This 177-nucleotide RNA was probed chemically with DMS and 2A3. The RNA was probed in 150 mM KOAc, 10 mM MgCl2 and 150 mM bicine (pH 8.5) at 24 C. Source: RMDB libraries RFM100 and RFMREP, as collected in RNAgym. 2A3 adducts were read by reverse transcription with SuperScript II with manganese. For DMS the reverse transcriptase was MarathonRT.
RNA sequence: GGGAACGACUCGAGUAGAGUCGAAAAUAAUCGGAACAUUUACCAGCGAUGUGAUGGCAUCGUUACGAAGAUCACAAGGGACCUGGCCGUGACUUUUGCCCAAGGAGGAAUGGCAAAGCUGUGCAGGAUCUAAAUAAGCUUUCGAGCUUAUUUAGAUAAAAGAAACAACAACAACAAC
Reactivity to DMS in 0.01 (KOAc 150mM, MgCl2 10mM, bicine 150mM(pH8.5), 24C), signal-to-noise 9, nucleotides 027 to 126: u030a070a080u010c060g010g010a100a080c110a070u020u010u020a110c040c030a080g010c030g010a080u000g020u010g010a110u020g010g010c050a060u010c040g010u010u010a060c110g010a080a080g000a070u010c050a040c070a080a090g000g000g010a080c070c030u010g000g010c020c010g010u000g000a130c040u000u000u010u000g000c020c000c040a110a090g000g000a050g000g000a110a040u010g000g010c030a050a060a080g000c040u010g010u010g010c060a070g000g000
Reactivity to 2A3 in 0.01 (KOAc 150mM, MgCl2 10mM, bicine 150mM(pH8.5), 24C), signal-to-noise 9, nucleotides 027 to 126: u120a010a060u090c050g040g030a070a040c030a100u090u110u110a090c050c010a010g010c020g030a020u020g040u060g060a200u150g130g000c010a020u010c020g010u020u020a030c050g050a050a030g050a100u090c040a020c030a160a070g060g010g030a040c010c010u030g080g020c010c010g020u040g060a110c010u020u050u050u080g020c010c010c010a020a030g080g020a040g010g060a100a070u080g000g000c010a040a040a020g020c030u050g020u070g040c010a020g020g040